The record gives the reactivity of an RNA of 177 nucleotides to DMS and 2A3. Reactivities are rounded to 0.1 and cut off at 0 and 3. It was measured as part of the RMDB library TTRINS. The DMS profile rests on 1,939 reads. DMS adducts were read by reverse transcription with MarathonRT. Values cover nucleotides 27 to 126.
RNA sequence: GGGAACGACUCGAGUAGAGUCGAAAAGAUAUGGAGUUCGUAAGGCCUUGGAUUUACCAUGGAGGAUGAGUAUGUCGGAAACGACAUACUCAUUGAAGUGGUUGUCAGGCUAUCGAACUCCUAAGUCCAUACGUUCUUCGUUCGCGAAGAACGUAUGAAAAGAAACAACAACAACAAC
Reactivity to DMS in 0.01 (KOAc 150mM, MgCl2 10mM, bicine 150mM(pH8.5), 24C), signal-to-noise 2, nucleotides 027 to 126: g000a080u000a300u000g000g010a020g010u000u000c000g040u020a100a300g010g000c000c000u010u010g020g010a040u010u000u000a020c000c000a000u000g000g000a300g020g000a010u000g000a000g020u000a000u010g010u000c000g030g010a130a100a300c000g030a030c000a020u000a000c000u010c000a000u000u000g000a300a240g000u000g000g010u000u000g030u000c000a030g010g000c020u000a200u010c030g000a010a040c000u000c000c000u000a010a060g000u000c020
Reactivity to 2A3 in 0.01 (KOAc 150mM, MgCl2 10mM, bicine 150mM(pH8.5), 24C), signal-to-noise 2, nucleotides 027 to 126: g050a010u120a100u270g000g000a010g010u000u010c020g040u100a300a300g190g050c030c030u110u260g210g000a090u290u300u300a040c020c020a030u030g000g060a110g300g030a030u000g000a020g010u020a000u000g020u020c000g020g010a070a060a090c020g000a000c000a000u000a000c000u000c010a000u000u000g000a000a000g020u010g000g000u000u000g010u050c010a010g050g000c020u010a020u010c010g000a020a000c000u030c000c000u000a000a000g020u000c010